Description: Structure probing data (2A3 and DMS) for a 177-nucleotide construct. DMS adducts were read by reverse transcription with MarathonRT.

RNA sequence: GGGAACGACUCGAGUAGAGUCGAAAAGAAAACGCCUAUUGGAUCGUAGGCGGAACGAUCCGGUAAAGAAAAUUAAAGGAGCCAAGGAGACGGCUCCGUCUCCUUAAGAAAAGGGUAAUCCCGAAAACCCUUAUGAAUACUUCGGUAUUCAUAAGGGAAAAGAAACAACAACAACAAC
Reactivity to 2A3 in 0.01 (KOAc 150mM, MgCl2 10mM, bicine 150mM(pH8.5), 24C), signal-to-noise 3, nucleotides 027 to 126: g030a000a060a000a000c010g020c000c010u040a030u020u040g000g080a000u020c010g000u010a000g020g020c000g010g000a010a000c000g010a020u000c000c000g000g000u080a090a050a040g120a060a090a020a000u160u110a090a030a000g060g010a030g040c030c020a000a000g010g000a010g020a010c030g030g150c090u040c070c000g010u000c000u000c000c000u020u020a060a030g040a070a100a020a000g030g000g000u020a040a060u020c000c000c000g000a020a010a010a030
Reactivity to DMS in 0.01 (KOAc 150mM, MgCl2 10mM, bicine 150mM(pH8.5), 24C), signal-to-noise 4, nucleotides 027 to 126: g010a050a070a060a150c080g000c020c000u040a060u020u030g000g000a010u000c000g010u000a080g010g000c050g000g000a070a080c020g010a030u000c000c000g000g010u010a020a110a100g030a060a070a060a150u000u040a040a110a100g000g000a090g000c060c030a040a050g000g020a020g000a030c040g000g010c140u040c160c000g020u000c000u010c000c000u000u010a050a060g000a050a060a090a080g000g000g010u000a110a070u000c000c000c000g000a090a040a080a140
The reactions ran in a buffer of 150 mM KOAc, 10 mM MgCl2 and 150 mM bicine (pH 8.5), at 24 C.